[RMDB]
RNA sequence: GGGAACGACUCGAGUAGAGUCGAAAACUUGUGCCGCGUCCCACAAAUUGCCAACUCAGAACUGCUUACGGCGGGGAAUCCAACUGUAUAAUUAAAACAUAGGUUUGUGAUGCAUCCAAGUGGUGUAUAUCGCAAACUGAUUUCUGCCCAGUGCUCUGCUGUAUUUAUUGUUCGCAAUAAAUACAGCAAAAGAAACAACAACAACAAC
Reactivity to DMS in 0.01 (KOAc 150mM, MgCl2 10mM, bicine 150mM(pH8.5), 24C), signal-to-noise 2, nucleotides 027 to 156: c020u000u000g020u000g000c040c020g040c030g020u000c020c010c000a140c070a030a070a130u000u000g010c020c020a090a130c050u000c000a140g030a080a150c080u000g000c070u000u010a040c060g000g000c030g040g000g020g010a060a080u000c000c040a030a100c110u000g030u000a110u000a050a180u000u000a040a070a090a110c070a110u000a220g000g010u000u010u000g050u030g000a050u000g010c010a010u000c010c030a150a190g010u020g050g000u010g010u010a040u000a040u000c020g000c000a020a010a010c010u000g010a100u000u010u010c020u000g030c010c030c020a090g040u010g010c060u010c070u020
Reactivity to 2A3 in 0.01 (KOAc 150mM, MgCl2 10mM, bicine 150mM(pH8.5), 24C), signal-to-noise 7, nucleotides 027 to 156: c020u050u060g010u050g040c020c030g040c030g050u010c030c020c000a040c040a020a150a080u130u110g030c040c020a050a040c050u030c080a020g030a130a050c030u060g020c030u110u080a040c050g000g000c000g000g020g000g010a030a030u000c030c020a050a040c080u070g060u090a080u040a170a160u170u160a070a080a040a030c060a060u090a060g040g000u000u000u010g000u000g000a000u000g000c000a000u000c020c020a260a120g060u210g230g000u020g030u010a120u020a010u130c000g000c000a000a000a010c010u000g000a000u010u070u010c020u040g010c000c010c020a050g020u040g050c010u010c040u070

About this RNA:
Structure probing data (DMS and 2A3) for a 207-nucleotide construct. Source: RMDB library PDB130, as collected in RNAgym. Conditions: 150 mM KOAc, 10 mM MgCl2 and 150 mM bicine (pH 8.5), 24 C. 2A3 adducts were read by reverse transcription with SuperScript II with manganese. For 2A3, 8,340 sequencing reads were counted. DMS adducts were read by reverse transcription with MarathonRT.